[RMDB]
RNA sequence: GGGAACGACUCGAGUAGAGUCGAAAAUGUUCGACCGGCUGAUGGGUCGGGCCGUCUUCGCCAAGACCGAUGGAAUCAUGCGUCAUCACAUAGACGACGCGAAUGCCCAUCAGCGAGGAAAGACGCACACUAUUAUCGGUUUCGACCGAUAAUAGUGAAAAGAAACAACAACAACAAC
Reactivity to 2A3 in 0.01 (KOAc 150mM, MgCl2 10mM, bicine 150mM(pH8.5), 24C), signal-to-noise 8, nucleotides 027 to 126: u100g020u020u020c010g020a020c010c010g070g000c050u060g030a060u080g030g010g050u050c060g010g020g000c020c020g010u010c010u050u040c080g070c070c070a050a040g030a080c030c070g020a040u050g020g050a070a100u140c030a040u180g020c010g020u000c000a030u050c010a030c020a080u200a080g020a020c030g010a010c000g010c000g050a090a060u140g010c000c000c000a000u000c000a010g000c010g010a070g010g010a020a050a010g020a010c010g010c010a040
Reactivity to DMS in 0.01 (KOAc 150mM, MgCl2 10mM, bicine 150mM(pH8.5), 24C), signal-to-noise 9, nucleotides 027 to 126: u010g010u000u000c010g010a300c000c010g020g030c040u010g010a060u010g000g010g010u000c100g010g010g020c020c040g010u000c010u000u000c150g020c090c090a080a150g010a120c090c070g000a040u000g010g010a100a090u000c070a080u010g010c020g010u000c000a050u000c030a130c290a140u010a110g000a010c030g010a010c000g010c000g000a070a050u000g000c150c000c000a010u000c000a020g000c010g010a230g000g000a060a080a060g000a030c020g010c200a250

Structure probing data (2A3 and DMS) for a 177-nucleotide construct. Values are in units of 0.01, from 0 to 300, in steps of 10. For DMS the reverse transcriptase was MarathonRT. 2A3 adducts were read by reverse transcription with SuperScript II with manganese. The reactions ran in a buffer of 150 mM KOAc, 10 mM MgCl2 and 150 mM bicine (pH 8.5), at 24 C. The DMS profile rests on 13,814 reads. The 2A3 profile rests on 19,735 reads.